The record gives the reactivity of an RNA of 177 nucleotides to DMS and 2A3. The RNA was probed in 150 mM KOAc, 10 mM MgCl2 and 150 mM bicine (pH 8.5) at 24 C. Reactivities are rounded to 0.1 and cut off at 0 and 3.
RNA sequence: GGGAACGACUCGAGUAGAGUCGAAAAGUUUUGUAGGAUUGUCGUCCUAUUUACGUGUUUAAGCCUGGGGAGAGGUGUAAUAGCGAGAACCAGGUGUAGGCAUUAUGAGCUGGUCGUUUUUGUACUGCGAACAUAUUAUGUUCGCAUAAUAUGUUCGAAAAGAAACAACAACAACAAC
Reactivity to DMS in 0.01 (KOAc 150mM, MgCl2 10mM, bicine 150mM(pH8.5), 24C), signal-to-noise 9, nucleotides 027 to 126: g010u010u000u000u010g010u000a020g000g000a030u030u020g020u020c200g010u000c010c010u000a020u010u010u020a060c140g010u000g010u000u000u000a090a280g010c010c010u000g000g000g000g000a230g010a090g010g010u000g010u010a080a090u030a200g010c040g000a080g010a300a240c020c020a020g000g010u000g010u010a060g000g010c010a020u010u010a070u020g000a080g010c040u000g000g010u000c030g000u000u000u000u000u000g010u000a100c130u000g010
Reactivity to 2A3 in 0.01 (KOAc 150mM, MgCl2 10mM, bicine 150mM(pH8.5), 24C), signal-to-noise 9, nucleotides 027 to 126: g030u040u060u140u140g030u020a010g010g030a030u040u150g240u260c120g010u010c000c000u010a020u030u110u050a040c040g010u020g010u040u050u050a040a010g010c000c000u010g010g000g020g000a170g010a070g050g060u050g030u100a100a140u090a080g100c150g030a080g020a090a020c010c000a010g000g010u020g000u010a020g020g000c010a010u030u050a090u210g060a040g040c040u030g030g010u030c030g010u020u000u010u050u080g090u060a070c030u050g040